Conditions: 150 mM KOAc, 10 mM MgCl2 and 150 mM bicine (pH 8.5), 24 C. An RNA of 207 nucleotides, treated with DMS and 2A3 and read out base by base. Reactivities are given for positions 27 through 156. It was measured as part of the RMDB library OK3TST.
[RMDB]
RNA sequence: GGGAACGACUCGAGUAGAGUCGAAAAAAUGUUUGAAUGAAUCAUAUAUACCAUAUCAAGAGUAUUCAUCCGGUUGUGUAACCAGAAAUAUAAUGGAAUAAUGUAGGUAUUAUCACAUUAUUAAAGCUUUGAUAUGCUCAAGUAACUAUGGUAAUACCCAAAAGCAGUUAUUCGUAACUGCUUUUGGAAAAGAAACAACAACAACAAC
Reactivity to DMS in 0.01 (KOAc 150mM, MgCl2 10mM, bicine 150mM(pH8.5), 24C), signal-to-noise 2, nucleotides 027 to 156: a100a060u010g000u010u000u040g020a080a060u000g010a090a100u000c030a060u010a110u010a210u010a180c050c010a080u010a060u000c030a080a150g000a130g020u010a060u000u000c070a130u000c020c040g040g000u000u000g010u000g040u000a080a050c020c010a050g000a050a080a100u000a120u000a040a090u000g000g010a090a060u000a000a040u000g010u000a090g040g010u000a030u000u000a040u000c030a040c020a020u000u000a010u000u010a070a070a110g000c040u000u000u010g010a150u000a080u000g020c040u000c040a040a220g020u010a010a080c190u010a020u000g000g010u000a030a070u010a060c100
Reactivity to 2A3 in 0.01 (KOAc 150mM, MgCl2 10mM, bicine 150mM(pH8.5), 24C), signal-to-noise 2, nucleotides 027 to 156: a000a020u170g040u090u040u060g110a090a060u060g050a030a010u050c060a000u060a050u090a000u030a220c020c000a010u030a000u160c030a070a040g010a010g070u090a020u060u070c030a080u040c100c040g020g000u050u090g130u060g080u110a040a030c000c020a010g050a010a080a000u190a010u040a080a000u000g000g030a000a060u020a040a020u050g020u090a090g040g050u060a040u110u060a050u110c010a000c000a030u010u020a010u000u120a080a080a040g020c030u130u100u090g030a030u130a020u240g020c010u020c060a000a060g020u020a050a030c050u010a000u020g000g000u010a020a010u040a040c000